[RMDB]
RNA sequence: GGGAACGACUCGAGUAGAGUCGAAAAUACGAUUGUCUGUUAUCGAACACAUUCAGUGAUAAAGCUGGGUUACUGCUGCUUUUGGUGCUCUCACCUUAUCUGGAAGAUCUGCAAACAUUACCUAAAUAGGCUGGCAAGAUAAACACUUUCUGGAACCUAUUCUCCUGCUAUUCGUAGCAGGAGAAUAAAAAGAAACAACAACAACAAC
Reactivity to DMS in 0.01 (KOAc 150mM, MgCl2 10mM, bicine 150mM(pH8.5), 24C), signal-to-noise 1, nucleotides 027 to 156: u000a120c030g000a090u000u000g000u030c050u020g000u010u000a060u020c050g030a090a110c050a080c070a080u000u010c040a090g030u000g020a080u000a070a080a260g000c060u000g020g010g000u000u000a060c070u000g000c030u000g030c000u000u000u000u000g000g020u000g000c030u000c040u000c020a090c030c040u000u000a070u010c090u020g000g010a080a060g000a030u000c020u000g010c060a050a120a060c110a070u000u000a040c040c040u000a080a050a160u000a110g020g060c000u000g040g010c040a070a090g000a020u010a120a100a150c050a030c080u000u000u000c000u010g020g060a100a130c060c060
Reactivity to 2A3 in 0.01 (KOAc 150mM, MgCl2 10mM, bicine 150mM(pH8.5), 24C), signal-to-noise 3, nucleotides 027 to 156: u130a010c010g030a040u050u020g040u080c080u030g070u090u040a100u090c070g030a080a010c010a010c030a050u090u130c030a050g040u010g030a120u100a140a160a010g010c010u020g020g000g050u050u050a060c010u050g030c010u000g030c010u070u060u060u050g030g010u010g000c010u030c010u020c030a050c010c010u060u120a050u050c050u060g010g010a060a010g020a080u000c050u060g040c010a040a080a030c040a120u110u190a050c000c020u100a120a110a120u060a110g020g000c010u010g030g000c010a020a020g010a060u090a050a150a000c010a010c020u050u080u040c020u030g070g010a060a050c030c000